[RMDB]
This 177-nucleotide RNA was probed chemically with 2A3 and DMS.

RNA sequence: GGGAACGACUCGAGUAGAGUCGAAAAUAACAACACGUCGAACUGAGGUACCUUUAAGAAAAUGCGUAAAUAAGAAUGCAUUUUUCAUUCCUCGCUCAGGAAUUCUUGAAGACUUUCGGAGCUUGUCAUCCGGAUGGAUGUUCGCAUCCAUCCGGAUAAAAGAAACAACAACAACAAC
Reactivity to 2A3 in 0.01 (KOAc 150mM, MgCl2 10mM, bicine 150mM(pH8.5), 24C), signal-to-noise 4, nucleotides 027 to 126: u130a020a010c080a010a000c020a000c040g130u090c020g030a080a070c060u040g000a050g060g000u080a090c030c050u070u070u070a110a040g040a010a000a000a000u010g020c010g030u110a080a180a020u300a180a140g160a090a050u160g000c010a000u000u000u000u020u040c020a050u030u040c000c000u030c020g040c000u030c000a000g010g050a000a010u040u000c010u050u130g110a130a020g010a050c000u090u100u040c030g000g000a000g000c020u070u070g230u120c060
Reactivity to DMS in 0.01 (KOAc 150mM, MgCl2 10mM, bicine 150mM(pH8.5), 24C), signal-to-noise 2, nucleotides 027 to 126: u020a150a080c080a060a050c070a170c010g010u010c050g040a090a100c070u000g000a050g010g000u010a040c060c090u000u030u000a090a050g000a000a010a000a010u000g000c000g000u000a090a140a180u090a130a100g000a090a090u000g000c050a000u000u010u000u000u080c100a120u010u000c000c000u000c070g000c010u010c080a070g000g000a000a000u000u000c000u000u010g000a110a060g000a020c040u000u000u030c030g000g000a020g000c100u020u000g000u020c130
The RNA was probed in 150 mM KOAc, 10 mM MgCl2 and 150 mM bicine (pH 8.5) at 24 C. Values are in units of 0.01, from 0 to 300, in steps of 10. Values cover nucleotides 27 to 126. It was measured as part of the RMDB library OK1LIB.